[RMDB]
RNA sequence: GGGAACGACUCGAGUAGAGUCGAAAAGCUUAGAUUCGUCUAAGCAAAAAUCCUAAGUCACGACGAAUGCUACUUGUCAGACGGUAUCGGAAACGAUACACGUCUUGGAUUUAGUAGCACUAUCGUGAUAUGGAAAAAAGUCCUAUUCGUAGGACAACUUAUAGUCAGAUUUCGAUCUGACUAUAAGAAAAGAAACAACAACAACAAC
Reactivity to 2A3 in 0.01 (KOAc 150mM, MgCl2 10mM, bicine 150mM(pH8.5), 24C), signal-to-noise 8, nucleotides 027 to 156: g000c000u010u000a000g000a020u050u070c190g030u010c160u010a000a000g000c010a050a000a000a010a040u040c010c000u030a090a020g030u000c000a000c000g020a000c030g100a300a120u030g000c000u000a000c000u010u010g020u020c000a000g000a000c000g000g000u000a000u000c000g020g040a070a060a050c010g000a000u010a050c230a110c210g000u000c000u020u090g040g000a010u200u150u120a000g000u000a000g000c010a010c000u000a000u000c000g000u000g000a000u010a050u050g030g040a030a070a030a040a040a030g010u000c010c000u010a020u040u120c300g040u050a010g000g000a000c000a010a010
Reactivity to DMS in 0.01 (KOAc 150mM, MgCl2 10mM, bicine 150mM(pH8.5), 24C), signal-to-noise 3, nucleotides 027 to 156: g010c010u000u000a000g020a060u000u000c300g020u000c000u030a000a020g000c000a000a040a080a090a130u000c000c000u000a090a260g010u000c010a020c000g020a020c040g000a080a030u000g010c000u000a000c000u000u000g010u000c000a010g000a020c000g020g030u010a010u000c010g020g010a230a130a260c020g030a030u000a010c000a090c000g010u000c000u010u000g020g010a040u010u000u010a020g020u000a000g020c010a010c030u010a060u000c000g000u000g010a020u000a250u010g020g000a000a030a100a090a050a170g000u000c000c010u010a060u010u010c270g010u000a010g020g010a020c000a030a090